[RMDB]
RNA sequence: GGGAACGACUCGAGUAGAGUCGAAAAGAUAUGGAGAUAGAGCGAUAAGACGCGUAUCGGAAACGAUACACGUCUUUUGACGCGAUUGUCUCCUAAGUCAAAACGUUUUGUCUUCGGACAAAACGAACGAAAAGCACAAGUUCGCUUGUGCUUUUCGAAAAGAAACAACAACAACAAC
Reactivity to 2A3 in 0.01 (KOAc 150mM, MgCl2 10mM, bicine 150mM(pH8.5), 24C), signal-to-noise 2, nucleotides 027 to 126: g000a000u090a020u090g000g000a000g000a010u070a050g080a040g010c010g020a050u040a290a030g010a010c030g020c010g000u000a010u010c010g010g000a030a040a010c010g010a000u000a010c010a010c000g000u000c000u000u020u010u050g060a010c000g000c020g050a040u000u190g010u010c010u010c000c000u020a090a010g040u010c040a020a030a110a170c020g000u000u000u030u010g010u000c010u030u110c300g120g000a000c000a000a010a000a010c010g020a060a020
Reactivity to DMS in 0.01 (KOAc 150mM, MgCl2 10mM, bicine 150mM(pH8.5), 24C), signal-to-noise 4, nucleotides 027 to 126: g010a040u000a300u010g000g010a000g010a000u000a010g020a300g010c020g000a130u010a030a010g020a010c010g040c050g000u010a000u000c000g000g000a080a060a190c000g010a000u000a000c000a000c000g000u000c000u000u000u000u000g010a170c070g020c010g010a210u000u000g010u000c000u000c000c000u000a050a080g000u000c020a130a060a100a130c030g010u000u000u000u000g000u000c000u000u010c250g010g000a010c000a000a000a010a000c000g010a040a090

Description
Chemical mapping of a 177-nucleotide RNA with 2A3 and DMS. It was measured as part of the RMDB library TTRDEL. The RNA was probed in 150 mM KOAc, 10 mM MgCl2 and 150 mM bicine (pH 8.5) at 24 C. For DMS, 2,946 sequencing reads were counted. Reactivities are given for positions 27 through 126.